[RMDB]
RNA sequence: GGGAACGACUCGAGUAGAGUCGAAAAUCGGUUCGACCUUUGCGACUGGCAUGGGUCCGUGGGCCGCGCCGUUCGUGGAUCUCGGGUAUAUCAGCGGCGACGGUAUCACUGAGUCGCUGGACGAGGAAGUUGAGUCGAAAUUCGUUUCGACUCAACUAAAAGAAACAACAACAACAAC
Reactivity to 2A3 in 0.01 (KOAc 150mM, MgCl2 10mM, bicine 150mM(pH8.5), 24C), signal-to-noise 2, nucleotides 027 to 126: u040c000g040g000u060u010c030g020a040c010c010u120u100u200g050c050g130a150c120u140g130g050c040a130u090g080g000g000u090c020c010g000u080g030g020g000c000c000g030c010g000c030c040g050u080u110c050g050u180g180g060a150u000c030u030c000g030g040g070u200a150u060a040u220c050a000g000c000g000g030c000g020a040c010g050g030u090a160u240c020a000c040u000g000a020g010u000c000g000c000u000g000g030a020c030g000a030g000g060a030
Reactivity to DMS in 0.01 (KOAc 150mM, MgCl2 10mM, bicine 150mM(pH8.5), 24C), signal-to-noise 2, nucleotides 027 to 126: u010c020g010g020u010u000c010g030a090c020c010u000u010u000g000c060g020a100c070u030g000g030c070a060u000g000g000g000u000c020c090g020u000g020g020g040c000c000g020c070g000c020c000g020u010u010c150g010u010g010g010a070u010c050u000c030g010g030g000u010a070u000a110u000c060a070g020c010g000g000c000g010a130c190g020g010u020a050u000c140a050c030u010g000a300g010u010c010g020c040u010g000g010a070c030g000a080g010g000a120